[RMDB]
RNA sequence: GGGAACGACUCGAGUAGAGUCGAAAAAGUUUCUCGAUAAUUGAUCUGUAGAAUCUGUCUAGCAAAACCCCAAAACCUUACACUGAGAGCAUUUAGCCUGAUUACUCUUUAAAUCAAAUCAGGCAAUUCAAGGUCGCAGUCUUCGGACUGCGACCAAGUCUUAUCGAUUGUUCGCAAUCGAUAAGACAAAAGAAACAACAACAACAAC
Reactivity to 2A3 in 0.01 (KOAc 150mM, MgCl2 10mM, bicine 150mM(pH8.5), 24C), signal-to-noise 1, nucleotides 027 to 156: a010g020u000u040u000c030u010c000g000a080u140a240a140u130u080g030a010u050c090u130g160u100a070g180a090a040u000c010u060g040u050c000u020a010g070c050a060a080a160a240c010c000c010c050a010a090a030a150c120c000u120u120a030c120a080c170u110g070a000g000a000g010c010a020u000u000u050a020g000c000c000u000g000a000u000u000a000c000u000c000u050u290u050a010a050a010u240c100a000a000a000u000c000a000g000g000c000a000a000u060u010c010a050a000g010g030u010c000g030c010a040g000u000c000u000u040c100g110g000a000c020u000g000c010g000a000c000c000a000a040